Chemical mapping of a 207-nucleotide RNA with 2A3. 2A3 adducts were read by reverse transcription with SuperScript II with manganese. It was measured as part of the RMDB library OK3TST. Reactivities are given for positions 27 through 156.

RNA sequence: GGGAACGACUCGAGUAGAGUCGAAAACAGGUGCCGGCCGGGAUCACACCCGCGGCGUGGGCUGCGAUGCCUCCCGAAACACAGGCGCAGAUCCUCGCGUCGACGCCGCAGGCCGCGGCCGACCAGCCGCCGUACUGAUCGCCGCGUGAGGGUGGCGGCAGCUAGGCCGUUUCGACGGCCUAGCUGCAAAAGAAACAACAACAACAAC
Reactivity to 2A3 in 0.01 (KOAc 150mM, MgCl2 10mM, bicine 150mM(pH8.5), 24C), signal-to-noise 2, nucleotides 027 to 156: c030a060g000g000u010g040c020c000g000g010c010c000g000g020g010a040u150c020a050c010a020c060c000c010g030c000g000g000c000g000u010g030g000g020c080u160g000c000g060a060u080g000c010c010u070c010c010c010g140a100a190a020c140a030c070a120g030g000c050g020c060a020g000a100u070c030c020u000c010g000c000g010u030c000g030a010c010g000c010c000g040c010a000g000g030c000c030g150c000g010g010c000c000g010a040c030c010a020g020c010c040g040c020c000g070u090a120c090u050g040a120u080c020g030c090c020g010c040g050u110g070a090g000g080g000u020g000g000c000g000